RNA sequence: GGGAACGACUCGAGUAGAGUCGAAAACAACACGUCCUCGUCGUACAGAGUGGUAACAUGUGUCACCACAUAUCCAAGCUUGGGUACACGGGCUUGACCCAACCCCUUGGGAGGAUGGUGGCACAUGAAAAGAAGUAACACUUCGGUGUUACUUCAACCCUACACUAUGGUUCGCCAUAGUGUAGGGAAAAGAAACAACAACAACAAC
Reactivity to DMS in 0.01 (KOAc 150mM, MgCl2 10mM, bicine 150mM(pH8.5), 24C), signal-to-noise 2, nucleotides 027 to 156: c060a120a060c100a100c040g020u000c010c010u010c070g040u000c080g040u020a120c040a130g010a210g040u010g010g000u000a090a160c010a040u020g030u010g000u000c010a030c040c000a020c060a190u010a170u000c000c010a010a120g020c050u000u000g020g000g060u000a050c150a070c070g010g030g030c020u010u000g000a170c010c010c010a120a030c030c000c010c010u000u000g010g010g020a210g020g010a080u000g000g020u000g000g000c020a050c000a000u000g000a030a050a090a150g010a020a000g020u000a000a000c010a040c000u000u020c250g050g010u000g030u000u000a000c000u000u010c000a010a080
Reactivity to 2A3 in 0.01 (KOAc 150mM, MgCl2 10mM, bicine 150mM(pH8.5), 24C), signal-to-noise 7, nucleotides 027 to 156: c060a010a020c020a020c060g140u110c010c010u040c030g180u040c040g070u170a070c070a080g070a030g050u120g050g070u130a090a010c000a000u000g000u010g000u000c000a010c000c040a060c050a120u230a040u060c010c000a000a020g030c040u040u030g010g000g000u030a030c020a020c070g010g000g030c040u250u300g170a300c000c000c000a010a020c000c000c000c000u000u000g000g000g000a000g030g000a030u020g000g000u000g000g000c000a000c000a000u000g000a000a000a000a020g000a000a000g000u000a000a000c000a000c000u030u060c190g090g000u000g000u000u000a000c000u000u000c000a000a000